[RMDB]
RNA sequence: GGGAACGACUCGAGUAGAGUCGAAAAGUGAGAAUUGUUUACAAAUUGUCUCUAAACACAUGUGAAUCACAGGCCUCAGUUAUCUAAACGAAAUCUGUACUUACUUUCAGAAUGUAAGAGAGUUUUAGUCUUAGUCGAUUUUCGAAUCGACUAAGACAAAAGAAACAACAACAACAAC
Reactivity to DMS in 0.01 (KOAc 150mM, MgCl2 10mM, bicine 150mM(pH8.5), 24C), signal-to-noise 2, nucleotides 027 to 126: g020u000g000a090g000a120a120u000u010g000u040u000u020a090c110a050a070a150u010u010g010u020c030u000c050u010a040a090a090c100a020c140a100u040g010u000g010a050a100u040c050a130c100a090g000g020c030c000u000c060a100g000u010u000a100u020c110u030a080a070a050c070g000a050a140a030u000c010u000g010u020a130c020u000u000a050c030u030u000u000c150a060g000a110a070u070g000u010a050a030g010a210g000a050g000u000u000u000u000a070
Reactivity to 2A3 in 0.01 (KOAc 150mM, MgCl2 10mM, bicine 150mM(pH8.5), 24C), signal-to-noise 4, nucleotides 027 to 126: g090u080g000a050g080a070a140u120u070g030u030u130u100a070c030a050a170a120u110u130g080u000c010u000c000u080a100a150a020c040a030c020a080u070g030u030g090a060a010u060c010a050c030a050g020g010c020c010u060c040a020g000u040u060a180u090c160u160a110a100a010c040g000a000a040a010u010c030u020g060u050a010c010u050u010a000c000u060u050u030c020a100g050a300a080u030g040u060a050a000g020a010g010a040g070u020u040u050u130a010

This 177-nucleotide RNA was probed chemically with DMS and 2A3. For DMS the reverse transcriptase was MarathonRT. Source: RMDB libraries RFM100 and RFMREP, as collected in RNAgym. 2A3 adducts were read by reverse transcription with SuperScript II with manganese. Reactivities are rounded to 0.1 and cut off at 0 and 3.